[RMDB]
This 177-nucleotide RNA was probed chemically with 2A3 and DMS.
The reactions ran in a buffer of 150 mM KOAc, 10 mM MgCl2 and 150 mM bicine (pH 8.5), at 24 C.
The DMS profile rests on 15,420 reads.
RNA sequence: GGGAACGACUCGAGUAGAGUCGAAAAGUUUCAUGAAAUGUCGGCGUGACUUUAAAACAUUGUGCAUGUCCGCUUAUUGAAAUUUAUAAACUACUGAUGAAGUGGAGGUGGGAUAGUGGUGCGCUAACAUAGUCCGCUAAUUCGUUAGCGGACUAUGAAAAGAAACAACAACAACAAC
Reactivity to 2A3 in 0.01 (KOAc 150mM, MgCl2 10mM, bicine 150mM(pH8.5), 24C), signal-to-noise 3, nucleotides 027 to 126: g000u000u000u000c010a000u060g070a100a140a000u240g030u090c010g010g010c000g000u010g030a060c000u010u080u110a080a160a040a000c040a050u050u080g030u080g030c030a000u010g040u020c000c000g000c000u010u020a000u010u010g000a000a010a010u000u030u030a110u050a040a070a030c040u120a050c010u050g070a140u150g050a250a020g080u050g030g020a000g040g000u100g000g020g040a070u070a060g030u030g060g000u030g010c070g000c020u030a030a040
Reactivity to DMS in 0.01 (KOAc 150mM, MgCl2 10mM, bicine 150mM(pH8.5), 24C), signal-to-noise 5, nucleotides 027 to 126: g000u010u000u000c000a020u010g010a120a080a030u020g010u050c030g000g000c010g020u000g000a040c010u010u010u020a080a100a090a220c170a000u010u020g010u030g010c020a010u010g000u060c010c010g000c020u000u000a000u010u010g000a020a020a020u000u000u010a130u020a090a080a070c040u010a080c070u010g000a100u020g000a090a050g010u020g010g000a070g000g050u020g010g000g000a070u000a020g000u000g000g020u000g010c090g000c050u000a060a220